[RMDB]
RNA sequence: GGGAACGACUCGAGUAGAGUCGAAAAUGGUAACCCCAACAAUCCUUCAUCUGUAUAUGCAAUUAUACGAUAGCUAGUUUUUUGGUUAUUUGCCUAUAUAAUUGAAAGAAUGUUGGGGCUGCCGAUGGAUCUAUCAGUAGUUCGCUACUGAUAGAUCAAAAGAAACAACAACAACAAC
Reactivity to 2A3 in 0.01 (KOAc 150mM, MgCl2 10mM, bicine 150mM(pH8.5), 24C), signal-to-noise 4, nucleotides 027 to 126: u170g000g000u000a010a020c010c010c000c010a010a000c000a000a030u010c000c010u020u010c000a020u000c040u080g020u010a000u010a010u020g000c010a040a020u170u080a140u170a220c060g030a050u020a030g010c040u030a090g100u120u090u070u090u260u170g070g000u030u010a030u020u040u040g000c000c000u000a000u000a000u000a030a070u010u020g000a020a000a000g010a020a020u000g000u000u010g010g010g000g000c010u000g000c000c000g000a050u090g120
Reactivity to DMS in 0.01 (KOAc 150mM, MgCl2 10mM, bicine 150mM(pH8.5), 24C), signal-to-noise 2, nucleotides 027 to 126: u010g010g030u000a010a040c000c000c000c010a010a000c000a030a050u000c000c020u000u000c000a010u000c120u000g010u000a000u010a000u010g000c010a040a070u000u010a080u020a130c200g000a030u000a020g020c060u010a070g000u000u010u010u010u000u000g010g000u000u010a020u000u000u000g010c020c030u000a010u000a000u000a020a090u010u010g000a000a010a020g000a020a060u000g020u000u000g000g000g010g020c020u000g020c000c000g000a090u010g010